This 177-nucleotide RNA was probed chemically with 2A3 and DMS. For 2A3 the reverse transcriptase was SuperScript II with manganese. The reactions ran in a buffer of 150 mM KOAc, 10 mM MgCl2 and 150 mM bicine (pH 8.5), at 24 C.
[RMDB]
RNA sequence: GGGAACGACUCGAGUAGAGUCGAAAAGCUAUACUGCGGUGAAUGUGUUCCUGAGCCUUGUACACACCGCCCGUCAAGCCACGAAAGCGGGGGGCACCUAAAGUCGCCGGGCUAACCUUCGGGAGGCCAAGUCAUUCAUCUUCGGAUGAAUGACUUGAAAAGAAACAACAACAACAAC
Reactivity to 2A3 in 0.01 (KOAc 150mM, MgCl2 10mM, bicine 150mM(pH8.5), 24C), signal-to-noise 6, nucleotides 027 to 126: g000c010u040a030u060a210c030u100g060c040g050g020u040g070a180a110u120g050u010g010u070u040c010c000u020g000a020g010c000c010u060u090g080u150a010c060a000c000a010c030c020g040c000c000c010g060u070c060a080a040g030c020c030a060c050g090a170a040a000g020c030g020g020g000g000g010g000c020a040c000c010u110a120a080a030g040u040c020g000c010c010g020g000g000c000u050a070a080c000c010u050u070c030g030g000g000a010g030g000c010
Reactivity to DMS in 0.01 (KOAc 150mM, MgCl2 10mM, bicine 150mM(pH8.5), 24C), signal-to-noise 4, nucleotides 027 to 126: g020c060u000a100u020a110c080u010g000c070g020g000u000g010a090a070u000g030u010g020u000u000c030c020u000g000a130g010c040c020u000u000g020u020a040c080a070c060a110c040c010g000c010c050c030g000u010c060a100a130g010c040c040a060c080g010a070a110a120g000c050g010g010g000g000g000g030c040a070c050c050u000a050a090a080g010u010c050g000c030c020g010g000g010c010u000a080a080c030c020u000u000c070g000g000g020a100g000g000c090